Overview: The data come from the RNA Mapping Database (RMDB), library OK3TST. The record gives the reactivity of an RNA of 207 nucleotides to DMS and 2A3. The reactions ran in a buffer of 150 mM KOAc, 10 mM MgCl2 and 150 mM bicine (pH 8.5), at 24 C. The DMS profile rests on 3,230 reads. DMS (dimethyl sulfate) methylates the pairing face of unpaired adenines and cytosines.
RNA sequence: GGGAACGACUCGAGUAGAGUCGAAAAAGGCCAAAUAGAGAGGUUUUCAUCAGGAUAUUAAAGAGUUUAGAUUUCAAUUUGGUGGGAAUGGAUGGGAUCUUAUUUGCAUUUUAUGAAGAGCUCCCUGGUUGCAAUAUCAGAAUGGAUUGGAGAGGAGGAAAGACAAUCCAUUCGUGGAUUGUCUUUCAAAAGAAACAACAACAACAAC
Reactivity to DMS in 0.01 (KOAc 150mM, MgCl2 10mM, bicine 150mM(pH8.5), 24C), signal-to-noise 2, nucleotides 027 to 156: a040g000g030c030c030a030a050a120u000a100g000a140g000a090g030g010u030u010u000u000c050a100u010c040a080g000g010a160u000a060u000u000a060a030a140g010a130g010u000u000u000a130g010a190u000u010u010c050a070a070u000u000u000g030g050u000g020g030g000a060a060u000g000g010a090u010g010g020g010a090u010c030u000u000a050u010u000u020g000c020a090u020u000u000u000a090u020g000a080a150g010a090g030c110u000c020c010c010u000g020g020u000u000g010c030a040a100u000a070u000c070a050g020a080a070u010g010g000a150u010u010g000g010a090g000a050g020g010a090g000
Reactivity to 2A3 in 0.01 (KOAc 150mM, MgCl2 10mM, bicine 150mM(pH8.5), 24C), signal-to-noise 3, nucleotides 027 to 156: a000g030g010c040c000a030a050a030u160a010g100a010g000a020g040g000u040u040u090u120c040a060u050c060a020g040g020a020u030a080u170u240a130a070a040g030a020g010u040u130u090a020g020a150u000u090u040c020a030a050u060u080u130g060g020u020g020g000g020a020a030u100g000g000a000u010g030g010g020a010u010c000u020u130a140u150u130u050g000c000a070u020u040u070u170a070u200g020a040a060g010a030g050c010u030c030c000c010u010g040g000u020u020g010c020a090a020u020a040u150c000a000g080a090a060u130g010g030a020u080u050g030g000a020g000a000g030g000a020g010